[RMDB]
Source: RMDB library OK1LIB, as collected in RNAgym. This 177-nucleotide RNA was probed chemically with DMS and 2A3. For DMS the reverse transcriptase was MarathonRT. The DMS profile rests on 41,199 reads. The RNA was probed in 150 mM KOAc, 10 mM MgCl2 and 150 mM bicine (pH 8.5) at 24 C.
RNA sequence: GGGAACGACUCGAGUAGAGUCGAAAAGGAGAGGAAAGUAAAAUAUAACACAACAUUUGUAAUUGUGUUAUCUGAUAACAAUUAUGGUGAUUGUGUAUUCUUCUCAUAUUGUGUAUUCAAGUAGAGAGUGCAGAUCAGUGUUCGCACUGAUUUGUACAAAAGAAACAACAACAACAAC
Reactivity to DMS in 0.01 (KOAc 150mM, MgCl2 10mM, bicine 150mM(pH8.5), 24C), signal-to-noise 9, nucleotides 027 to 126: g010g000a010g010a010g000g000a010a020a120g000u050a100a070a100a090u030a080u010a080a030c000a000c000a000a010c030a030u000u020u060g040u000a030a040u000u000g010u010g010u010u010a060u030c170u030g010a100u020a070a020c010a010a010u000u000a020u000g020g000u000g010a060u000u000g010u000g000u000a140u010u000c000u000u000c000u000c010a070u020a120u010u000g000u000g010u020a120u010u010c050a030a100g010u030a100g000a130g010a170
Reactivity to 2A3 in 0.01 (KOAc 150mM, MgCl2 10mM, bicine 150mM(pH8.5), 24C), signal-to-noise 9, nucleotides 027 to 126: g150g000a010g010a000g020g040a030a020a020g090u220a060a070a110a030u270a040u080a070a000c000a000c000a010a000c000a010u050u100u300g030u010a010a020u000u010g020u000g040u080u100a080u050c090u120g080a100u060a120a000c000a000a010u000u010a000u020g040g000u020g050a300u030u000g000u000g010u020a070u020u010c000u010u000c000u000c010a010u060a040u110u070g020u010g010u020a100u050u070c050a070a030g060u120a020g050a010g010a010